Overview
Source: RMDB library RNAMAK, as collected in RNAgym. Chemical mapping of a 207-nucleotide RNA with DMS and 2A3. As a SHAPE reagent, 2A3 marks flexible, mostly unpaired nucleotides at the ribose 2'-OH. The DMS profile rests on 4,520 reads. DMS adducts were read by reverse transcription with MarathonRT. In probing experiments dimethyl sulfate is read out at A N1 and C N3, which are open when not base-paired. The reactions ran in a buffer of 150 mM KOAc, 10 mM MgCl2 and 150 mM bicine (pH 8.5), at 24 C.
[RMDB]
RNA sequence: GGGAACGACUCGAGUAGAGUCGAAAAUGAGCUUCGGCUCAGAUUUGCCGUAGGACUAUUGCCAACUGUUAACGCAGAUAUAAGAUUCGAAAGAGUCUUAUGUAGUUAACUGUUGGUUUCGAAUAGUCCUAAACGGACUGAACCAAUUCGUUGGUAAUCAAAGUAAAAGCUUCGGCUUUUACUUUGAAAAAGAAACAACAACAACAAC
Reactivity to DMS in 0.01 (KOAc 150mM, MgCl2 10mM, bicine 150mM(pH8.5), 24C), signal-to-noise 2, nucleotides 027 to 156: u000g000a070g030c030u000u020c230g070g040c000u010c000a030g000a080u000u010u000g000c010c010g010u000a050g000g000a040c000u000a020u000u000g010c010c010a000a040c000u000g020u010u000a020a020c000g000c190a160g040a100u000a040u000a000a040g020a040u000u000c000g020a250a110a300g000a030g020u000c000u000u000a010u000g010u010a150g010u000u010a000a020c020u010g000u000u000g010g020u000u000u010c120g010a060a010u000a010g000u020c010c010u000a000a030a050c010g020g010a190c030u030g000a090a020c000c000a030a120u010u000c120g010u010u000g010g000u000a120a170
Reactivity to 2A3 in 0.01 (KOAc 150mM, MgCl2 10mM, bicine 150mM(pH8.5), 24C), signal-to-noise 2, nucleotides 027 to 156: u030g000a010g020c040u050u120c290g180g000c010u010c000a000g080a090u140u190u200g040c000c000g010u040a000g000g000a010c000u010a000u010u010g000c010c020a010a000c020u040g000u000u000a010a000c000g040c050a100g100a270u040a010u000a070a000g010a000u000u000c020g100a140a090a020g000a020g000u020c000u020u020a020u050g010u020a180g000u000u000a000a000c000u040g000u000u000g000g010u000u010u010c000g000a010a000u000a000g000u020c000c000u000a010a000a000c000g040g010a000c030u060g020a020a050c040c020a020a120u160u090c100g080u060u010g150g060u300a120a080